Chemical mapping of a 177-nucleotide RNA with 2A3. For 2A3, 395 sequencing reads were counted. It was measured as part of the RMDB library OK1LIB.
[RMDB]
RNA sequence: GGGAACGACUCGAGUAGAGUCGAAAAUCGAGCAGCUGGAACAUCUGCACGUGCUCAGUGCCAUCUUUCUUGUCUGUGGCCGGAAUGGUUUUGGACUCCCAGUCUCCGUUGCCCUUCUGAGAAAAAGGGUGCACUACCGGUUCGCCGGUAGUGCACCAAAAGAAACAACAACAACAAC
Reactivity to 2A3 in 0.01 (KOAc 150mM, MgCl2 10mM, bicine 150mM(pH8.5), 24C), signal-to-noise 1, nucleotides 027 to 126: u050c000g040a010g060c020a000g070c040u130g100g000a180a160c000a070u000c080u200g050c000a000c050g110u100g060c040u000c000a100g070u120g130c020c000a050u000c120u000u220u000c020u000u130g000u000c000u000g100u100g070g000c070c030g090g090a180a150u230g140g050u070u070u070u210g050g040a070c050u040c030c000c000a000g120u000c000u000c040c060g040u010u070g000c000c010c000u090u020c070u090g040a000g140a090a020a020a020a020g060

About this RNA:
The reactions ran in a buffer of 150 mM KOAc, 10 mM MgCl2 and 150 mM bicine (pH 8.5), at 24 C.